[RMDB]
RNA sequence: GGGAACGACUCGAGUAGAGUCGAAAAUCUUUAGGAGAGGAGUUCAGUGCCCACAGCUCCAGUGGACCGAGGGUGAAUUUCAGGAUCCGGGCCAGCGUGCCGUUUUUUACACGGAACACAGCCAGUACAUGACUCUCUGUUUCGACAGAGAGUCAUGAAAAGAAACAACAACAACAAC
Reactivity to DMS in 0.01 (KOAc 150mM, MgCl2 10mM, bicine 150mM(pH8.5), 24C), signal-to-noise 1, nucleotides 027 to 126: u000c000u000u010u000a110g050g000a130g000a120g000g000a140g000u000u000c050a080g000u010g020c070c000c010a100c130a070g030c010u000c040c080a090g020u000g000g000a050c060c080g010a070g000g000g030u000g000a040a050u000u000u000c060a070g020g000a130u020c040c010g040g030g030c050c040a050g030c060g010u000g000c000c020g000u020u000u000u020u020u020a070c190a020c000g000g000a060a020c050a000c040a220g000c010c020a100g000u010a160